[RMDB]
RNA sequence: GGGAACGACUCGAGUAGAGUCGAAAACUGAACGCGGACAUUGGCCUGCGGAACCUGACCCGGCUUGUCUCCACCACGCUGGUGGUCGAGCGGGCCGGGCGGCCGAUCUAUGCCGGCGUGCUGUGGUCCCGGGAGUACGACAGGGGAGCGGGGACGCAUGUAAAGAGGUGUUCGCACCUCUUUACAUAAAAGAAACAACAACAACAAC
Reactivity to 2A3 in 0.01 (KOAc 150mM, MgCl2 10mM, bicine 150mM(pH8.5), 24C), signal-to-noise 2, nucleotides 027 to 156: c050u050g080a050a000c070g010c020g050g030a080c040a100u080u110g100g070c010c060u080g020c000g040g010a050a090c020c010u150g160a260c000c000c000g030g000c020u030u010g060u110c030u000c020c060a000c010c000a020c040g260c260u300g150g040u010g010g020u020c030g000a000g000c000g020g000g000c020c000g030g000g000c000g000g000c000c000g020a060u070c040u150a020u180g030c020c010g080g040c030g040u060g010c010u060g010u060g080g040u000c000c000c000g000g000g000a060g020u120a040c030g020a040c050a050g000g010g010g020a050g060c040g000g000g010g020a010c060g000c050
Reactivity to DMS in 0.01 (KOAc 150mM, MgCl2 10mM, bicine 150mM(pH8.5), 24C), signal-to-noise 1, nucleotides 027 to 156: c040u000g010a070a030c020g000c010g020g040a040c030a190u000u020g030g050c030c030u000g000c090g030g000a170a110c020c010u040g010a110c010c030c000g000g000c010u000u000g010u000c020u010c010c040a080c000c010a040c080g040c210u010g040g040u000g000g030u000c050g030a050g050c040g010g000g040c000c000g000g010g020c000g000g000c010c010g010a110u000c080u000a150u010g020c050c010g010g030c000g020u020g060c040u000g030u020g020g010u000c000c010c000g020g040g000a230g060u010a090c090g010a060c090a090g000g000g000g020a130g010c020g000g000g010g000a060c050g000c140